[RMDB]
About this RNA:
The record gives the reactivity of an RNA of 177 nucleotides to DMS and 2A3.
RNA sequence: GGGAACGACUCGAGUAGAGUCGAAAAUUGGAGGUUCGCGGAGAUGCCACCUGCAGGGCAGGCCCUGACUGGUGCAUGUAUUGAGCUGCUCGCAUCUCCACAUGCACCACUUAUUUCAGCUCAUGCAAGUGAUGAUAGUCUUCGGACUAUCAUCACUAAAAGAAACAACAACAACAAC
Reactivity to DMS in 0.01 (KOAc 150mM, MgCl2 10mM, bicine 150mM(pH8.5), 24C), signal-to-noise 3, nucleotides 027 to 126: u000u000g020g010a110g020g010u000u010c140g040c060g030g000a040g020a040u010g000c050c040a040c030c010u000g000c030a040g000g010g020c070a130g010g000c020c040c020u010g000a110c080u000g020g020u000g020c140a050u000g000u020a050u020u010g030a030g010c050u000g000c090u010c140g010c000a010u000c000u000c020c200a070c100a040u000g010c030a070c000c000a070c060u010u000a060u000u010u000c030a060g020c020u000c000a030u000g020c090a130
Reactivity to 2A3 in 0.01 (KOAc 150mM, MgCl2 10mM, bicine 150mM(pH8.5), 24C), signal-to-noise 2, nucleotides 027 to 126: u050u060g070g000a060g060g000u130u190c100g000c070g080g010a030g000a020u040g000c030c000a020c020c020u010g010c030a060g050g040g010c060a080g090g060c000c020c010u150g070a240c030u040g010g010u010g020c050a020u030g020u080a110u040u110g000a010g000c020u040g000c020u040c050g000c010a000u000c000u000c020c000a010c000a020u100g000c010a020c000c020a020c060u140u140a130u070u100u070c020a000g010c020u020c050a030u070g000c020a070

It was measured as part of the RMDB library OK2TST.